[RMDB]
RNA sequence: GGGAACGACUCGAGUAGAGUCGAAAAUUGCCGCCAGCGCCGUAUUGGACGUGAUCACCGCUGCGAUCACAGUGGCAAGGCGACUUGCGUUGUACGGAUCUGACUGGAUUACGAGCACCGGGCGGCGGCACGUCAGUGGGUUCGCCCACUGACGUGCAAAAGAAACAACAACAACAAC
Reactivity to DMS in 0.01 (KOAc 150mM, MgCl2 10mM, bicine 150mM(pH8.5), 24C), signal-to-noise 2, nucleotides 027 to 126: u020u000g010c000c000g010c010c000a130g050c050g030c020c000g000u000a040u030u000g040g000a030c120g010u000g000a000u000c000a210c060c080g020c060u000g000c050g000a040u000c050a050c060a130g000u030g000g020c000a050a110g030g030c270g000a120c020u000u000g000c030g000u000u010g010u000a070c070g010g000a070u010c040u020g030a090c050u020g010g010a210u000u000a100c050g020a160g000c050a080c070c080g030g000g040c000g000g000c030g000
Reactivity to 2A3 in 0.01 (KOAc 150mM, MgCl2 10mM, bicine 150mM(pH8.5), 24C), signal-to-noise 1, nucleotides 027 to 126: u040u030g030c010c020g000c020c010a030g020c050g100c010c020g050u080a100u020u160g150g100a030c000g000u020g010a000u010c010a010c060c040g080c030u130g000c030g020a030u060c080a020c010a080g050u080g140g000c000a040a040g000g000c030g050a080c080u030u060g000c020g060u070u100g020u040a030c050g000g050a010u060c020u090g140a180c030u110g030g060a010u010u180a070c040g000a010g090c020a040c050c050g000g010g000c000g000g000c000g000